[RMDB]
RNA sequence: GGGAACGACUCGAGUAGAGUCGAAAACACAGACAGCUCACGAACGCGUGAGGCAACCUGGUGCUGCCGAGGUCGAGUCUGUGGCGAGCGCCGCGGCAGCUGAGAAGCGAACGACUGGACGAGGUGCUCCCCGUCGCACUUUCGAGUGCGACGGGGAAAAAGAAACAACAACAACAAC
Reactivity to 2A3 in 0.01 (KOAc 150mM, MgCl2 10mM, bicine 150mM(pH8.5), 24C), signal-to-noise 1, nucleotides 027 to 126: c040a000c000a000g050a000c000a000g010c000u010c000a010c000g130a300a020c130g050c040g090u060g040a020g010g130c080a010a010c010c000u020g030g060u070g050c000u000g000c000c000g000a040g010g020u060c020g020a060g100u060c020u040g030u030g010g000c020g020a060g030c020g000c010c000g020c000g010g000c010a000g000c010u020g050a100g000a040a010g050c040g070a010a080c050g050a070c020u070g050g000a040c020g010a000g020g020u080g000c000